[RMDB]
RNA sequence: GGGAACGACUCGAGUAGAGUCGAAAAGUCAAUGCGGAUUGCCUGUGGCGGUGUUGGCUGGACGACCGAGUGUCGGCGGAUACCUCCGGGCAGCUUGUCUGCUUGCAUGCUCCCAUGGGCUGGCUCCUCUAAACUAACAGUUCGCUGUUAGUUUAGAAAAAGAAACAACAACAACAAC
Reactivity to 2A3 in 0.01 (KOAc 150mM, MgCl2 10mM, bicine 150mM(pH8.5), 24C), signal-to-noise 5, nucleotides 027 to 126: g040u030c010a000a030u140g010c040g030g040a080u100u130g010c010c020u130g080u230g070g010c060g020g000u010g010u040u040g170g000c020u060g040g060a020c020g030a050c040c130g090a140g040u210g030u050c020g020g020c010g020g000a020u040a060c010c000u010c000c000g000g030g000c010a000g010c020u080u090g050u030c010u020g020c020u020u060g000c010a040u070g020c010u010c000c020c010a020u060g020g000g000c030u020g030g000c020u010c010c000
Reactivity to DMS in 0.01 (KOAc 150mM, MgCl2 10mM, bicine 150mM(pH8.5), 24C), signal-to-noise 5, nucleotides 027 to 126: g000u010c020a030a030u000g020c050g000g010a070u000u000g010c000c030u000g020u010g020g020c120g000g020u000g020u000u000g010g020c010u000g010g010a150c040g000a120c130c130g000a140g010u010g010u000c020g010g000c030g010g000a040u000a030c030c020u000c020c020g010g000g010c010a020g000c130u000u000g010u010c010u000g000c020u000u000g010c050a080u000g010c090u000c020c010c010a100u000g010g000g010c020u000g000g000c070u000c040c060